Source information: Conditions: 150 mM KOAc, 10 mM MgCl2 and 150 mM bicine (pH 8.5), 24 C. This 177-nucleotide RNA was probed chemically with DMS and 2A3. High 2A3 reactivity points to a flexible backbone, as in loops and unpaired stretches. 2A3 adducts were read by reverse transcription with SuperScript II with manganese.

[RMDB]
RNA sequence: GGGAACGACUCGAGUAGAGUCGAAAAACGGUAAUCGCCAGUGAGCCGUGUAGUUAAACUCGGUGCGUUGUAGUAAUACAGGGUGCUAAGCGAGUGGAUAAAGUAACCUUGAAAAAGGUGCGAGCAAUGAAUGAAUUUAUUUCGAUAAAUUCAUUCAAAAAGAAACAACAACAACAAC
Reactivity to DMS in 0.01 (KOAc 150mM, MgCl2 10mM, bicine 150mM(pH8.5), 24C), signal-to-noise 9, nucleotides 027 to 126: a040c020g010g010u010a080a090u010c040g010c080c100a090g000u010g010a250g020c000c010g010u000g010u010a080g010u010u010a070a100a050c020u000c020g010g010u000g000c030g010u010u000g010u000a020g000u040a120a100u010a030c030a020g000g000g040u000g010c020u010a070a080g020c070g000a040g020u000g000g010a110u020a050a080a100g010u010a070a040c000c000u000u000g010a070a070a090a020a010g000g010u000g000c050g010a100g010c180a090a120
Reactivity to 2A3 in 0.01 (KOAc 150mM, MgCl2 10mM, bicine 150mM(pH8.5), 24C), signal-to-noise 8, nucleotides 027 to 126: a000c020g000g000u060a120a070u050c040g050c090c050a090g050u070g090a010g040c000c020g020u020g040u050a120g020u010u200a050a070a020c020u020c020g000g030u040g020c270g120u010u030g020u030a030g020u030a020a090u040a050c010a010g040g030g010u020g010c020u050a090a030g090c020g020a020g020u030g000g040a090u090a090a120a020g030u030a060a090c000c000u010u030g050a040a020a000a010a000g020g000u010g010c050g010a050g020c060a050a090